An RNA of 177 nucleotides, treated with 2A3 and DMS and read out base by base. The RNA was probed in 150 mM KOAc, 10 mM MgCl2 and 150 mM bicine (pH 8.5) at 24 C. Source: RMDB libraries RFM100 and RFMREP, as collected in RNAgym.
RNA sequence: GGGAACGACUCGAGUAGAGUCGAAAAUCACAAACAAACAUUACCCCUUUGUUUGACCGUGAAAAAUUUCUCCCAUCCCCUUUGUUGUCGUUAAGACAUAUGAAACCGCGCUUAUCCCGGCGCGGUUCUCAUAGCGCUUAUUCGUAAGCGCUAUGAGAAAAGAAACAACAACAACAAC
Reactivity to 2A3 in 0.01 (KOAc 150mM, MgCl2 10mM, bicine 150mM(pH8.5), 24C), signal-to-noise 2, nucleotides 027 to 126: u020c010a030c030a060a090a020c010a000a030a040c040a100u060u300a190c010c000c000c020u030u020u030g080u000u000u020g080a100c000c080g020u000g150a070a050a030a100a120u100u150u020c060u000c020c020c000a050u060c000c010c000c020u020u050u110g030u010u020g010u040c030g000u020u040a050a040g020a020c020a040u210a060u130g150a070a040a000c000c000g000c000g000c030u020u080a030u140c010c000c010g010g030c000g000c000g000g010u000u000
Reactivity to DMS in 0.01 (KOAc 150mM, MgCl2 10mM, bicine 150mM(pH8.5), 24C), signal-to-noise 1, nucleotides 027 to 126: u000c050a070c000a030a230a210c000a000a000a020c040a040u010u010a250c040c050c000c050u020u000u000g000u000u000u000g000a090c290c220g000u020g010a030a050a090a060a120u000u010u020c140u010c020c000c010a180u010c000c000c040c080u000u020u010g000u000u000g020u010c000g040u030u000a070a080g020a050c080a010u010a050u030g010a080a050a050c000c000g010c000g010c000u000u020a180u000c010c010c010g010g000c000g030c000g000g000u000u000